[RMDB]
RNA sequence: GGGAACGACUCGAGUAGAGUCGAAAAGAUAUGGAUGCAUCUCAACAGCGUGUGUGUCGGAAACGACACCACGACAUGAGAUGUCCUAAGUCAAAGUAGGUACCUUUGUUCGCAAAGGUACCUACAAGCUAAUGACUACCUUCGGGUAGUCAUUAGCAAAAGAAACAACAACAACAAC
Reactivity to DMS in 0.01 (KOAc 150mM, MgCl2 10mM, bicine 150mM(pH8.5), 24C), signal-to-noise 3, nucleotides 027 to 126: g010a050u000a270u020g000g010a110u000g040c080a010u010c010u000c000a030a090c300a210g010c020g010u000g030u010g010u000g010u000c000g020g000a060a080a150c000g000a020c000a010c000c000a000c020g010a020c070a150u010g010a000g000a000u000g030u000c020c000u000a020a160g000u000c040a080a100a150g030u000a010g000g020u000a020c000c000u000u010u000g010u000u000c220g020c000a010a030a020g000g000u000a000c000c000u000a000c000a030a060
Reactivity to 2A3 in 0.01 (KOAc 150mM, MgCl2 10mM, bicine 150mM(pH8.5), 24C), signal-to-noise 3, nucleotides 027 to 126: g030a020u090a050u120g030g000a070u210g090c030a020u020c010u000c000a140a300c150a120g110c000g000u040g020u050g010u000g010u030c000g000g010a090a050a010c020g000a000c000a010c000c000a000c010g020a020c000a060u030g000a010g000a000u000g000u030c000c000u080a140a050g070u010c060a050a050a120g020u010a010g000g010u000a000c010c000u000u000u050g050u050u080c170g000c200a000a000a000g000g000u000a000c000c000u000a000c000a010a000

Structure probing data (DMS and 2A3) for a 177-nucleotide construct. DMS adducts were read by reverse transcription with MarathonRT.